The record gives the reactivity of an RNA of 177 nucleotides to 2A3 and DMS. The RNA was probed in 150 mM KOAc, 10 mM MgCl2 and 150 mM bicine (pH 8.5) at 24 C. For DMS, 1,248 sequencing reads were counted. It was measured as part of the RMDB library M2PK90. Values cover nucleotides 27 to 126.
[RMDB]
RNA sequence: GGGAACGACUCGAGUAGAGUCGAAAAAUGAUUCGUAGUGUAAGACGAUCGACAGUCAUCGCUUGCCAGCAGGACCACCAAAGGAAUACGCUUCCGUAACUACUCGAGAUCCCAAGCGAUAAAACAACCUUGAUGGGUAAUUCGUUACCCAUCAAGGAAAAGAAACAACAACAACAAC
Reactivity to 2A3 in 0.01 (KOAc 150mM, MgCl2 10mM, bicine 150mM(pH8.5), 24C), signal-to-noise 2, nucleotides 027 to 126: a000u080g010a050u080u060c030g040u060a090g030u060g040u280a100a040g100a140c030g050a020u010c040g130a100c050a010g040u120c020a050u000c020g020c010u040u100g020c020c030a020g020c030a000g090g000a020c000c000a020c030c020a150a000a000g080g030a030a060u090a120c070g030c150u000u000c040c000g000u020a060a040c010u010a000c010u000c000g000a000g000a040u010c000c000c000a000a000g110c040g050a040u130a150a110a000a030c060a010a000
Reactivity to DMS in 0.01 (KOAc 150mM, MgCl2 10mM, bicine 150mM(pH8.5), 24C), signal-to-noise 2, nucleotides 027 to 126: a030u000g000a020u020u000c010g010u040a070g040u020g000u000a050a060g010a090c050g020a020u000c040g030a150c130a120g020u000c050a030u010c040g020c020u000u000g000c060c060a160g000c030a090g050g000a050c080c070a080c050c040a040a060a110g000g020a050a040u000a120c150g060c100u000u000c060c000g000u000a190a110c010u010a000c010u000c020g010a000g000a120u000c000c000c000a050a080g000c150g010a120u010a010a080a080a110c150a090a150